Description:
Structure probing data (DMS and 2A3) for a 177-nucleotide construct. High 2A3 reactivity points to a flexible backbone, as in loops and unpaired stretches.

[RMDB]
RNA sequence: GGGAACGACUCGAGUAGAGUCGAAAACAGUCAACGUGAAGGCGGGCCAGACCAUCGCCGCAUUCUACCAGAGCACCGUCAUGAUCUUUGGCACGAUGGCUCGCUACAUGCGGAGAGUUAGGGAAAACACGUGAUGCAUAUUCGUAUGCAUCACGUGAAAAGAAACAACAACAACAAC
Reactivity to DMS in 0.01 (KOAc 150mM, MgCl2 10mM, bicine 150mM(pH8.5), 24C), signal-to-noise 4, nucleotides 027 to 126: c120a130g020u000c040a080a160c070g020u000g010a160a150g000g010c040g010g000g000c030c030a080g000a160c120c080a110u010c080g010c040c040g020c060a050u000u000c070u000a090c060c050a060g000a030g010c090a040c040c030g000u000c110a080u000g000a080u000c040u000u020u000g010g000c060a060c140g010a110u010g000g000c000u000c010g010c040u000a050c070a040u000g040c090g010g000a110g000a080g010u000u000a090g010g010g000a070a070a050a170
Reactivity to 2A3 in 0.01 (KOAc 150mM, MgCl2 10mM, bicine 150mM(pH8.5), 24C), signal-to-noise 3, nucleotides 027 to 126: c010a030g110u050c020a010a070c090g030u050g090a120a020g090g010c000g010g010g000c000c030a030g030a080c030c000a090u080c060g020c010c020g000c000a010u120u090c030u070a130c020c060a020g020a010g100c040a020c070c010g110u090c060a080u130g060a120u050c060u120u060u070g020g000c040a000c090g060a040u030g010g000c020u040c000g000c000u050a030c030a040u150g010c000g000g020a030g010a010g060u050u180a080g000g050g000a010a050a020a030
The RNA was probed in 150 mM KOAc, 10 mM MgCl2 and 150 mM bicine (pH 8.5) at 24 C. DMS adducts were read by reverse transcription with MarathonRT. It was measured as part of the RMDB library OK2TRN.